[RMDB]
RNA sequence: GGGAACGACUCGAGUAGAGUCGAAAAACCGGAGGCCGACAAUCCAGGGAACCGGAUGUCAUCACGUUGUUGCAGUACCAGAUGGAAUCUUAAAUCCGAUCUGCAAAUAAGCAUGUAGAAAGCUGAUAAAAUCACACACACUUCGGUGUGUGUGAAAGUCAUCAGUAUACUUCGGUAUACUGAUGACAAAAGAAACAACAACAACAAC
Reactivity to 2A3 in 0.01 (KOAc 150mM, MgCl2 10mM, bicine 150mM(pH8.5), 24C), signal-to-noise 2, nucleotides 027 to 156: a010c070c010g000g010a030g080g000c020c030g040a040c050a060a050u030c020c030a070g010g030g060a090a020c040c020g040g010a000u030g020u070c120a100u110c060a050c140g000u020u030g030u010u050g000c060a050g050u100a080c050c000a000g010a050u020g030g060a040a040u110c110u180u160a160a170a070u000c020c030g050a060u010c020u040g010c030a140a000a000u050a030a020g040c030a020u070g040u070a060g160a090a050a000g000c010u040g040a020u150a050a100a030a020u070c000a000c000a010c000a020c000a000c000u030u090c080g100g000u000g000u000g000u000g000u000g020a000a000a010
Reactivity to DMS in 0.01 (KOAc 150mM, MgCl2 10mM, bicine 150mM(pH8.5), 24C), signal-to-noise 1, nucleotides 027 to 156: a140c010c030g010g000a010g000g010c040c020g000a070c050a090a090u010c040c030a050g060g030g020a080a190c040c000g050g020a130u000g010u020c030a120u000c090a050c140g060u010u000g020u000u000g010c000a100g030u020a030c110c010a040g040a070u000g000g020a060a040u040c180u000u010a040a070a090u000c050c000g030a110u000c010u010g040c040a030a030a090u010a050a080g000c030a110u000g030u000a160g020a080a040a110g000c010u000g010a110u000a050a070a100a190u010c000a020c010a010c010a050c000a000c000u010u020c300g050g000u000g030u000g030u010g000u010g020a020a020a060

This 207-nucleotide RNA was probed chemically with 2A3 and DMS. The RNA was probed in 150 mM KOAc, 10 mM MgCl2 and 150 mM bicine (pH 8.5) at 24 C. For DMS, 1,812 sequencing reads were counted. It was measured as part of the RMDB library M2RFPK.